The record gives the reactivity of an RNA of 207 nucleotides to 2A3 and DMS.
The RNA was probed in 150 mM KOAc, 10 mM MgCl2 and 150 mM bicine (pH 8.5) at 24 C.
For DMS the reverse transcriptase was MarathonRT.
For 2A3 the reverse transcriptase was SuperScript II with manganese.

RNA sequence: GGGAACGACUCGAGUAGAGUCGAAAAAGUGAGUAUGGCUCGUUACGACGAGCCAUACUCACAACGGUUUUCCAAAAUCGUCGUGAGACGGACCUUGGAAAACCUAGUAUUUAAAUAACUAGGUCAAAUUAGCCUAGAUCCUUCGGGAUCUAGGCAAUCAAGCUUAUAUGUUCGCAUAUAAGCUUGAAAAAGAAACAACAACAACAAC
Reactivity to 2A3 in 0.01 (KOAc 150mM, MgCl2 10mM, bicine 150mM(pH8.5), 24C), signal-to-noise 3, nucleotides 027 to 156: a000g000u000g000a000g000u000a010u010g010g010c010u010c020g030u050u070a090c250g010a000c000g000a110g020c010c000a000u000a000c000u000c000a000c000a000a000c000g000g000u000u000u000u010c000c000a000a000a000a030u060c000g000u010c000g020u050g100a090g000a000c010g000g000a010c010c010u030u070g010g000a000a000a000a000c000c000u000a010g000u010a070u050u140u090a120a180a090u150a070a010c070u040a010g030g010u030c020a010a040a300u150u180a110g000c000c010u000a000g000a000u000c010c000u050u080c210g070g010g000a000u000c000u000a000g000g000c000a000a000
Reactivity to DMS in 0.01 (KOAc 150mM, MgCl2 10mM, bicine 150mM(pH8.5), 24C), signal-to-noise 1, nucleotides 027 to 156: a130g030u000g000a030g010u010a040u010g000g010c000u010c000g010u010u000a120c250g040a100c010g040a010g000c010c000a000u010a010c000u000c000a060c000a000a060c070g020g000u000u000u000u000c020c020a050a020a050a060u000c000g020u000c000g000u000g000a300g010a040c000g020g030a040c020c010u000u010g010g000a070a050a020a020c000c000u000a030g000u000a070u000u000u000a110a150a150u000a100a120c030u010a070g010g010u000c050a050a070a140u000u000a160g010c030c000u000a000g000a000u010c000c000u000u010c300g080g030g010a000u000c000u030a010g000g020c000a000a000